RNA sequence: GGGAACGACUCGAGUAGAGUCGAAAAGCAAACAACGUACAUUCUAUAAUACCUGAAGUACGAAAACGUAAAUAUAUAAAGCAUCAGCUAAAAGGUCUGCUAGAUGCAUAUAUAAAAAGACCAAAAAUACAUUAUUCUGGUUCGCCAGAAUAAUGUAAAAAGAAACAACAACAACAAC
Reactivity to DMS in 0.01 (KOAc 150mM, MgCl2 10mM, bicine 150mM(pH8.5), 24C), signal-to-noise 2, nucleotides 027 to 126: g000c010a120a160a070c120a120a080c020g010u000a000c030a060u000u010c020u030a040u010a120a130u000a170c230c140u010g020a040a020g000u010a030c000g000a050a040a100a090c150g020u000a020a030a160u000a000u000a000u010a030a150a130g050c000a000u000c000a030g000c030u000a020a100a180a120g020g000u000c110u000g010c000u000a140g040a000u000g010c000a160u000a020u020a000u000a040a060a010a170a010g000a220c020c020a000a070a050a060a120
Reactivity to 2A3 in 0.01 (KOAc 150mM, MgCl2 10mM, bicine 150mM(pH8.5), 24C), signal-to-noise 1, nucleotides 027 to 126: g010c030a080a080a040c060a060a030c040g000u010a030c020a280u000u000c010u050a160u050a300a230u110a200c020c050u070g000a000a000g000u010a010c000g080a130a090a020a000c040g030u090a010a100a000u130a030u050a020u000a040a200a020g000c010a010u000c010a000g000c030u070a060a090a180a140g070g080u070c070u060g050c010u070a110g000a000u000g000c020a020u020a000u000a000u000a060a090a020a000a000g020a000c000c000a000a090a000a000a090